[RMDB]
RNA sequence: GGGAACGACUCGAGUAGAGUCGAAAAGCUCGGUAUGGUAUAGCGUUGCUUGCUUGCUAUAUUGCUUGCUUGCUUUGCACCGAAAGUAAUCUUCGGUAUGAAGAUAGCUUUUCGAACGAGCGAAGAAGGGAAAUGUAAACUUCGGUUUACAUUUCCCAAAAGAAACAACAACAACAAC
Reactivity to 2A3 in 0.01 (KOAc 150mM, MgCl2 10mM, bicine 150mM(pH8.5), 24C), signal-to-noise 6, nucleotides 027 to 126: g030c010u000c020g040g030u210a100u130g030g030u100a080u170a170g000c030g050u040u130g050c040u060u070g000c000u000u020g010c040u030a050u040a110u220u280g010c020u000u030g000c000u000u040g000c000u020u010u110g000c000a000c020c000g030a000a010a010g040u060a130a120u020c010u020u000c000g160g120u260a180u300g000a000a000g010a000u020a030g040c000u000u100u100u070c010g000a060a060c020g000a010g000c010g020a090a020g070a100a160
Reactivity to DMS in 0.01 (KOAc 150mM, MgCl2 10mM, bicine 150mM(pH8.5), 24C), signal-to-noise 2, nucleotides 027 to 126: g000c010u010c000g000g000u010a000u010g000g020u000a070u080a070g010c010g000u020u000g010c130u000u000g010c030u000u000g000c000u010a180u040a040u010u020g030c070u000u000g050c020u020u020g000c000u000u000u020g010c020a120c050c020g000a000a000a050g060u010a100a030u000c020u000u020c000g040g070u040a020u080g010a000a010g010a010u000a200g000c000u000u020u020u050c050g000a090a090c030g010a010g000c000g010a090a040g000a090a120

Source information:
Structure probing data (2A3 and DMS) for a 177-nucleotide construct. Source: RMDB library OK1LIB, as collected in RNAgym. In probing experiments dimethyl sulfate is read out at A N1 and C N3, which are open when not base-paired. The RNA was probed in 150 mM KOAc, 10 mM MgCl2 and 150 mM bicine (pH 8.5) at 24 C. For 2A3 the reverse transcriptase was SuperScript II with manganese.